[RMDB]
Structure probing data (2A3 and DMS) for a 177-nucleotide construct. As a SHAPE reagent, 2A3 marks flexible, mostly unpaired nucleotides at the ribose 2'-OH. For DMS the reverse transcriptase was MarathonRT. 2A3 adducts were read by reverse transcription with SuperScript II with manganese.
RNA sequence: GGGAACGACUCGAGUAGAGUCGAAAACGUCUCCGUGUGGAAGGACAGGUCCAGACGGCGCGAGUCCUUUGUGUUUGUGUCUGUCUCGUUGAAUCUCGGUGCCAAAACAAAGGGAGGUCCGAUUUGGCGAUAAAAAUUGAUUCGUCAAUUUUUAUCGAAAAGAAACAACAACAACAAC
Reactivity to 2A3 in 0.01 (KOAc 150mM, MgCl2 10mM, bicine 150mM(pH8.5), 24C), signal-to-noise 4, nucleotides 027 to 126: c050g050u040c030u030c030c020g030u300g020u040g070g020a030a040g070g020a050c040a050g050g090u030c020c000a010g020a040c000g010g020c010g000c010g010a030g100u030c010c000u040u030u060g050u000g020u000u060u010g070u000g020u010c000u010g010u000c000u000c030g030u010u080g040a040a050u030c010u010c020g040g010u060g000c020c010a030a030a050a030c040a050a080a030g030g020g020a020g010g040u000c000c000g000a010u030u020u070g040g000
Reactivity to DMS in 0.01 (KOAc 150mM, MgCl2 10mM, bicine 150mM(pH8.5), 24C), signal-to-noise 5, nucleotides 027 to 126: c100g010u030c020u010c000c000g010u000g000u000g000g010a050a050g000g010a070c170a070g010g000u010c010c010a050g000a030c020g000g000c300g000c040g000a100g000u010c010c020u000u010u020g000u010g010u000u000u010g010u010g000u000c010u010g000u000c020u010c070g000u020u010g010a060a120u010c050u000c030g000g020u020g000c020c040a030a040a080a060c130a050a060a070g010g000g000a090g010g010u010c010c010g010a170u010u010u000g010g020